[RMDB]
RNA sequence: GGGAACGACUCGAGUAGAGUCGAAAAACUGAUACCUUACGAGGUAUCAGAAGGACUUCGUGGUAGAGCGCCACGAACGGAAAAUAAAGAAAGCUCGAUUGAAACGCACCGUGUACGCACGGUGCGAAAAAGUCGAUCCAGUUCGCUGGAUCGACAAGAUGCAAGAAUGGUUCGCCAUUCUUGCAUCAAAAGAAACAACAACAACAAC
Reactivity to 2A3 in 0.01 (KOAc 150mM, MgCl2 10mM, bicine 150mM(pH8.5), 24C), signal-to-noise 2, nucleotides 027 to 156: a000c000u010g000a000u000a000c000c000u050u050a070c250g090a030g000g010u000a000u000c000a010g000a030a040g070g000a070c030u000u000c010g000u000g000g000u030a130g010a000g000c030g010c010c010a010c010g000a010a000c030g060g030a030a040a050a010u060a010a040a010g140a020a050a010g000c000u000c000g120a170u070u290g060a090a090a000c000g000c000a000c000c010g030u010g060u090a020c150g000c070a000c010g010g000u000g010c000g000a000a000a000a000a000g000u000c000g000a000u000c000c000a000g030u070u090c070g090c130u000g000g000a000u000c000g000a000c000a000a020